[RMDB]
RNA sequence: GGGAACGACUCGAGUAGAGUCGAAAAUUGAGCUGUUGCUACGCGGAGAAGUCCAUCGCCACCAAUUCCGCUUCGGCGAUCACAUAGUGCGGCAAUGAAAUCUGGUGUGAGCUCAAUUUUCGCAUCUAAAUCCGGGAUGAUAACGAAAUCAUUUUCAUCACUAUGACGGGUUCGCCCGUCAUAGUGAAAAAGAAACAACAACAACAAC
Reactivity to 2A3 in 0.01 (KOAc 150mM, MgCl2 10mM, bicine 150mM(pH8.5), 24C), signal-to-noise 2, nucleotides 027 to 156: u000u020g020a020g000c020u040g090u300u240g020c040u070a010c030g020c020g050g070a060g040a190a030g090u090c080c010a090u070c080g000c040c000a070c000c140a090a210u080u120c050c030g000c000u090u090c130g040g000c010g040a000u090c000a000c060a090u170a060g060u110g100c130g030g020c000a050a040u230g080a090a080a040u070c070u080g080g000u030g060u070g050a010g000c000u000c030a010a000u030u000u000u000c010g000c000a050u000c000u030a030a130a120u040c060c010g000g000g000a060u170g000a000u140a070a070c060g020a060a020a020u040c020a060u120u070u090u260c100a100